Annotation: Structure probing data (DMS and 2A3) for a 177-nucleotide construct. Source: RMDB library OK1LIB, as collected in RNAgym. 2A3 adducts were read by reverse transcription with SuperScript II with manganese. The reactions ran in a buffer of 150 mM KOAc, 10 mM MgCl2 and 150 mM bicine (pH 8.5), at 24 C. The DMS profile rests on 1,405 reads.

RNA sequence: GGGAACGACUCGAGUAGAGUCGAAAAGGGAGAUCCGAGCAGAGGCAUAGCGAACUGCGCACGGCGAAGCCUUGAGGGAAUGCCGUAGGACCCGGGUUCGAUUCCCGGCGGCUCCACCGAAGGGCCAAGGUCCUACCGUAUUCGUACGGUAGGACCUAAAAGAAACAACAACAACAAC
Reactivity to DMS in 0.01 (KOAc 150mM, MgCl2 10mM, bicine 150mM(pH8.5), 24C), signal-to-noise 2, nucleotides 027 to 126: g000g020g000a000g000a040u080c080c070g000a060g040c010a020g100a130g030g050c150a130u010a120g040c110g000a080a150c000u000g000c000g100c110a040c000g010g000c040g000a020a300g020c000c000u000u100g080a270g000g000g000a140a120u060g000c010c000g000u030a020g020g000a080c250c000c010g000g000g000u000u020c110g000a300u030u000c000c000c050g040g030c060g000g070c020u000c010c220a250c100c010g020a180a010g000g000g000c030c060a130
Reactivity to 2A3 in 0.01 (KOAc 150mM, MgCl2 10mM, bicine 150mM(pH8.5), 24C), signal-to-noise 2, nucleotides 027 to 126: g080g010g010a050g000a010u030c020c010g000a030g000c020a010g010a090g040g000c080a060u090a110g040c020g110a080a040c000u060g000c000g010c010a010c000g060g030c160g100a030a000g040c000c020u040u070g030a100g010g020g000a070a000u080g000c010c000g000u050a100g030g110a030c030c010c000g000g000g000u040u060c040g010a040u070u020c000c000c000g000g000c000g000g010c000u000c010c040a080c020c040g040a070a040g010g000g010c000c000a000